[RMDB]
RNA sequence: GGGAACGACUCGAGUAGAGUCGAAAACCGUAGGAGGUCGGAAGAAGCUGCGAAAGCUUGGAUUUACUUUAUUCGAAAGAGUAAAGUUGUCAGCUUUCGAACUACAGUGUAAACGACCUCCUAAACGGAAACGGUCUAGCCUUCGGGCUAGACCGAACAAAUGCAUCAGGUUCGCCUGAUGCAUUUGAAAAGAAACAACAACAACAAC
Reactivity to DMS in 0.01 (KOAc 150mM, MgCl2 10mM, bicine 150mM(pH8.5), 24C), signal-to-noise 2, nucleotides 027 to 156: c010c000g030u000a040g010g000a050g030g030u000c000g050g000a020a220g000a140a300g000c000u000g040c010g030a020a050a010g010c020u000u000g040g040a020u010u000u000a000c020u000u000u000a010u000u010c000g020a180a130a300g000a070g040u000a000a000a060g050u000u010g050u000c000a040g000c000u000u000u010c010g000a040a290c000u000a060c010a010g010u010g010u000a020a190a300c030g020a000c000c010u010c000c000u000a000a060a020c030g000g010a060a060a090c030g000g000u010c010u000a010g010c010c000u000u000c300g020g010g020c000u000a010g000a010c000c000g000a000a060

Notes
The record gives the reactivity of an RNA of 207 nucleotides to DMS. The data come from the RNA Mapping Database (RMDB), library RNAMAK. The reactions ran in a buffer of 150 mM KOAc, 10 mM MgCl2 and 150 mM bicine (pH 8.5), at 24 C. For DMS the reverse transcriptase was MarathonRT. Reactivities are given for positions 27 through 156.